The record gives the reactivity of an RNA of 177 nucleotides to 2A3 and DMS. The DMS profile rests on 1,583 reads. DMS adducts were read by reverse transcription with MarathonRT. Values cover nucleotides 27 to 126.
RNA sequence: GGGAACGACUCGAGUAGAGUCGAAAAGAUAUGGACCAGGUCCAAGCAAGCUGGAUACUCGGAAACGAGUAUUUAGUGAUGACCUUGGAGCCUGGUCCUAAGUCAAAUCCAUCCUUCGGGAUGGAAACUUUCAUAACCGGUUCGCCGGUUAUGAAAGAAAAGAAACAACAACAACAAC
Reactivity to 2A3 in 0.01 (KOAc 150mM, MgCl2 10mM, bicine 150mM(pH8.5), 24C), signal-to-noise 1, nucleotides 027 to 126: g030a000u090a010u080g010g010a000c000c000a000g000g020u010c010c000a000a010g010c020a050a290g000c000u010g050g000a000u020a000c000u000c010g040g050a100a050a060c010g000a030g030u010a010u010u010u000a020g000u030g180a300u160g090a070c000c040u000u000g040g010a020g300c030c000u000g000g000u000c010c000u000a000a000g000u000c000a020a020a060u000c010c000a000u010c010c010u050u080c300g140g000g000a000u000g000g000a030a030a000
Reactivity to DMS in 0.01 (KOAc 150mM, MgCl2 10mM, bicine 150mM(pH8.5), 24C), signal-to-noise 2, nucleotides 027 to 126: g000a080u000a300u020g000g000a010c000c000a010g000g010u000c000c000a020a000g010c060a090a180g020c000u000g010g000a000u000a000c000u000c000g000g000a130a080a210c000g010a010g000u010a000u000u000u030a020g080u000g020a070u010g000a100c300c000u000u000g000g010a080g000c010c000u010g010g000u020c000c010u000a010a090g000u020c060a070a120a120u010c000c000a030u000c000c010u000u000c280g020g000g000a030u000g010g000a000a010a100